[RMDB]
RNA sequence: GGGAACGACUCGAGUAGAGUCGAAAAAUGUCACUGAAUAGCUCACAAAGGACGCCAAUCUACGACAACAGAGACAUAAGCAUAUAGGAGAAAGGGUCCACACAUCCUCCUUUCAAAGUGUGGAGAAAAGAGAGAGAAAGGGAGAGAAGAGUCAUGAAAUUUACCAGCGAUUCGUCGCUGGUAAAUUAAAAGAAACAACAACAACAAC
Reactivity to 2A3 in 0.01 (KOAc 150mM, MgCl2 10mM, bicine 150mM(pH8.5), 24C), signal-to-noise 2, nucleotides 027 to 156: a000u090g020u030c030a040c080u030g040a080a090u070a120g010c020u010c040a080c060a070a170a050g050g010a040c040g030c030c010a010a060u010c010u050a050c030g060a020c060a110a020c000a060g060a010g030a050c010a060u100a080a070g040c030a060u130a020u120a160g030g030a030g050a030a100a040g030g000g000u000c000c000a010c010a010c000a020u010c000c030u080c000c010u100u300u140c080a100a080a030g010u030g000u010g050g040a000g020a030a050a010a000g070a000g000a000g000a000g000a060a010a000g020g000g020a020g020a000g010a050a000g000a000g020u040c040a080u050g060a050
Reactivity to DMS in 0.01 (KOAc 150mM, MgCl2 10mM, bicine 150mM(pH8.5), 24C), signal-to-noise 1, nucleotides 027 to 156: a120u010g000u000c070a200c000u000g010a080a180u000a070g010c030u000c070a240c050a010a070a090g030g000a130c060g000c020c030a080a140u000c070u000a060c070g000a120c000a120a040c050a090g000a070g000a040c020a070u010a080a110g010c100a080u020a180u000a190g010g000a070g020a020a070a090g010g010g020u000c000c040a060c030a010c000a150u010c070c010u010c020c000u000u010u010c060a040a060a080g000u000g000u000g000g000a150g000a030a030a030a130g070a150g010a080g020a060g000a060a000a070g000g010g010a040g020a110g000a020a050g010a060g000u000c040a040u000g010a030